Structure probing data (DMS and 2A3) for a 177-nucleotide construct. The 2A3 profile rests on 2,143 reads. For 2A3 the reverse transcriptase was SuperScript II with manganese. Conditions: 150 mM KOAc, 10 mM MgCl2 and 150 mM bicine (pH 8.5), 24 C. Reactivities are given for positions 27 through 126.

[RMDB]
RNA sequence: GGGAACGACUCGAGUAGAGUCGAAAAGAUAUGGAAUCCUGACAUGAGCGGCCCUCGGAAACGAGGGAAGCUCAACAGCAUGGAUUCCUAAGUCAAAGAAGGUGCAGUGUUCGCACUGCACCUUCAAGCAUGAUACUCUCUUCGGAGAGUAUCAUGCAAAAGAAACAACAACAACAAC
Reactivity to DMS in 0.01 (KOAc 150mM, MgCl2 10mM, bicine 150mM(pH8.5), 24C), signal-to-noise 2, nucleotides 027 to 126: g000a030u000a300u000g020g010a010a000u000c010c010u000g010a190c140a170u000g000a020g020c000g000g000c000c000c000u000c010g020g000a080a110a170c010g000a020g010g030g000a000a000g020c000u000c000a000a090c240a090g010c020a030u000g000g000a000u000u000c000c000u020a030a050g000u000c010a110a150a110g000a000a020g000g020u000g000c010a000g030u000g000u000u020c230g010c000a010c030u000g030c010a000c000c000u000u000c000a030a060
Reactivity to 2A3 in 0.01 (KOAc 150mM, MgCl2 10mM, bicine 150mM(pH8.5), 24C), signal-to-noise 1, nucleotides 027 to 126: g000a010u040a050u140g020g010a020a000u000c010c000u020g080a080c020a150u130g010a000g010c020g030g020c000c010c000u000c000g010g050a070a020a040c010g000a000g000g000g020a000a000g000c000u000c010a000a010c020a000g060c030a070u180g010g000a010u000u010c000c000u000a000a020g050u010c030a110a000a190g000a050a000g040g000u010g000c020a000g010u020g050u080u300c280g050c080a000c000u000g000c010a030c010c010u010u010c000a000a000